[RMDB]
RNA sequence: GGGAACGACUCGAGUAGAGUCGAAAAACCGAAGUAAAGAUCUCCAAUUGUGGCACCACCAGGUGGCCACCACUCUUUGAAGUGAGGAGACUUGCUUUACGUGUUUGUUCAGCCCGAGCUUUCGCUCCAUUCUCAUGCAGUUCGCUGCAUGAGAAUGAAAAGAAACAACAACAACAAC
Reactivity to 2A3 in 0.01 (KOAc 150mM, MgCl2 10mM, bicine 150mM(pH8.5), 24C), signal-to-noise 4, nucleotides 027 to 126: a030c000c000g010a010a010g010u090a160a060a160g040a300u000c010u000c020c040a180a170u180u130g000u000g000g000c010a000c000c010a050c030c030a080g000g010u050g180g030c010c010a010c000c000a000c000u020c010u180u210u300g170a150a000g000u020g030a070g000g000a000g000a000c000u000u000g000c000u040u020u010a060c030g110u130g030u140u030u040g120u140u200c040a020g040c010c000c000g010a020g010c030u150u190u120c080g000c010u000c030
Reactivity to DMS in 0.01 (KOAc 150mM, MgCl2 10mM, bicine 150mM(pH8.5), 24C), signal-to-noise 4, nucleotides 027 to 126: a010c000c000g010a030a010g000u000a000a040a020g020a150u000c000u000c000c000a190a210u010u010g030u000g000g020c030a030c010c010a170c300c300a150g000g000u000g020g010c000c000a000c010c010a000c000u010c010u000u000u000g020a130a020g010u010g010a110g030g000a010g000a020c010u000u000g010c000u010u000u030a060c130g000u010g000u000u000u000g010u000u010c260a190g000c010c000c000g010a030g010c040u010u000u000c080g000c040u000c030
Structure probing data (2A3 and DMS) for a 177-nucleotide construct. Source: RMDB library VIROID, as collected in RNAgym.